[RMDB]
RNA sequence: GGGAACGACUCGAGUAGAGUCGAAAAGCUGAGUUGGCACAAUCUGCGGCCAGUGGUAAACCGCCGCUAGAUUUGAGUAUUUUUCCGCGCACCGAUCACUGGCGCAAGCUGUUAUCAGCAUUGAUUGCUUGUUUGAAAUUUUCGAAUUUCAAACAAGAAAAGAAACAACAACAACAAC
Reactivity to 2A3 in 0.01 (KOAc 150mM, MgCl2 10mM, bicine 150mM(pH8.5), 24C), signal-to-noise 5, nucleotides 027 to 126: g000c010u020g010a020g110u300u200g140g020c010a010c020a060a150u050c050u080g000c020g150g120c010c010a030g000u010g010g030u070a160a160a050c030c040g030c040c000g000c020u050a030g000a100u040u060u150g090a100g250u110a080u030u050u000u030u030c030c000g000c010g000c030a070c060c030g020a020u030c010a000c030u010g000g000c010g000c010a010a020g000c030u030g010u150u060a090u090c010a000g010c040a060u030u100g100a100u040u100g040
Reactivity to DMS in 0.01 (KOAc 150mM, MgCl2 10mM, bicine 150mM(pH8.5), 24C), signal-to-noise 8, nucleotides 027 to 126: g020c020u000g000a060g020u000u010g010g000c040a120c080a070a070u000c110u000g010c000g010g020c000c050a040g020u000g000g010u000a030a140a200c170c210g010c040c040g020c030u000a030g000a040u000u010u000g010a190g020u010a030u000u000u000u000u010c050c100g010c070g020c050a080c160c150g010a030u000c020a030c050u000g000g010c000g010c010a050a070g000c100u000g010u000u000a110u000c010a010g010c000a160u000u000g000a120u000u010g000
This 177-nucleotide RNA was probed chemically with 2A3 and DMS. High 2A3 reactivity points to a flexible backbone, as in loops and unpaired stretches. The 2A3 profile rests on 6,638 reads. For DMS the reverse transcriptase was MarathonRT. 2A3 adducts were read by reverse transcription with SuperScript II with manganese. Conditions: 150 mM KOAc, 10 mM MgCl2 and 150 mM bicine (pH 8.5), 24 C.